[RMDB]
Description: Chemical mapping of a 177-nucleotide RNA with DMS and 2A3. The reactions ran in a buffer of 150 mM KOAc, 10 mM MgCl2 and 150 mM bicine (pH 8.5), at 24 C. It was measured as part of the RMDB library OK2TST. For 2A3, 1,751 sequencing reads were counted. For DMS, 1,272 sequencing reads were counted.
RNA sequence: GGGAACGACUCGAGUAGAGUCGAAAACGAUCACCGUAUCGAGUACUUUUCCGGUGGCAUCUACCACAGCGCAUUUUACUCCAUUGCGAUAGCCAGGAUCGAGUCCGAGUGUCGCACGCUGUCCUGCUGCGGGUUGACAUUUCGAUGUCAACCCGCAAAAAGAAACAACAACAACAAC
Reactivity to DMS in 0.01 (KOAc 150mM, MgCl2 10mM, bicine 150mM(pH8.5), 24C), signal-to-noise 2, nucleotides 027 to 126: c100g000a040u000c060a120c120c070g010u020a040u000c080g000a130g020u000a120c120u000u000u000u010c040c000g000g010u010g010g000c140a010u000c110u000a080c050c060a090c050a030g010c030g010c160a050u000u010u020u020a100c140u000c030c060a070u000u000g010c040g000a020u000a080g020c050c010a260g000g000a020u000c230g000a140g040u000c000c010g000a130g020u000g020u010c010g040c090a080c150g000c020u000g010u010c070c020u010g030c190
Reactivity to 2A3 in 0.01 (KOAc 150mM, MgCl2 10mM, bicine 150mM(pH8.5), 24C), signal-to-noise 2, nucleotides 027 to 126: c030g010a030u000c030a050c030c040g070u120a050u130c040g020a050g080u170a250c040u000u130u060u010c050c000g050g000u020g030g010c030a050u020c030u100a060c000c000a000c010a010g050c030g020c050a080u010u050u120u240a120c050u090c070c020a090u050u090g000c010g020a040u020a050g210c070c010a020g000g020a040u100c130g120a100g210u010c010c010g000a020g050u050g010u030c010g010c020a000c010g010c000u020g020u050c010c010u070g010c040